Chemical mapping of a 177-nucleotide RNA with 2A3 and DMS. For DMS the reverse transcriptase was MarathonRT. The reactions ran in a buffer of 150 mM KOAc, 10 mM MgCl2 and 150 mM bicine (pH 8.5), at 24 C. It was measured as part of the RMDB library 15KREP. For 2A3, 1,627 sequencing reads were counted.
RNA sequence: GGGAACGACUCGAGUAGAGUCGAAAACUGCUUGUGACGGUCUUGCUUCAGCUUAUAGGGCGAAUUCCUUUGAUGUACCUACAUUCUGCGCAAACCGUUCUGCAAUGUGUAAUUGGUGCUUGAUUAGGCCUAACUUACUCUUCGGAGUAAGUUAGGCAAAAGAAACAACAACAACAAC
Reactivity to 2A3 in 0.01 (KOAc 150mM, MgCl2 10mM, bicine 150mM(pH8.5), 24C), signal-to-noise 2, nucleotides 027 to 126: c000u030g020c020u080u070g030u090g040a010c010g020g000u070c070u130u000g000c030u120u110c010a000g000c010u010u020a010u030a030g000g000g020c060g100a110a130u170u170c050c000u100u060u250g100a100u090g010u070a110c010c010u010a000c010a010u020u010c000u030g000c020g020c000a000a000a000c020c000g000u040u000c000u000g000c000a050a100u130g030u020g040u100a040a210u020u020g050g000u060g050c010u080u060g060a100u050u110a060g020
Reactivity to DMS in 0.01 (KOAc 150mM, MgCl2 10mM, bicine 150mM(pH8.5), 24C), signal-to-noise 2, nucleotides 027 to 126: c100u000g000c060u010u000g010u000g000a030c040g000g020u000c160u010u020g000c000u040u020c020a040g000c080u000u000a070u000a010g000g000g030c080g000a090a110u000u000c140c210u010u000u030g000a150u000g020u000a040c000c010u010a010c040a010u000u000c030u000g050c300g000c010a010a000a040c000c030g020u000u000c000u010g010c040a060a020u010g020u000g000u020a090a080u000u000g010g000u000g010c030u000u000g000a210u010u000a080g000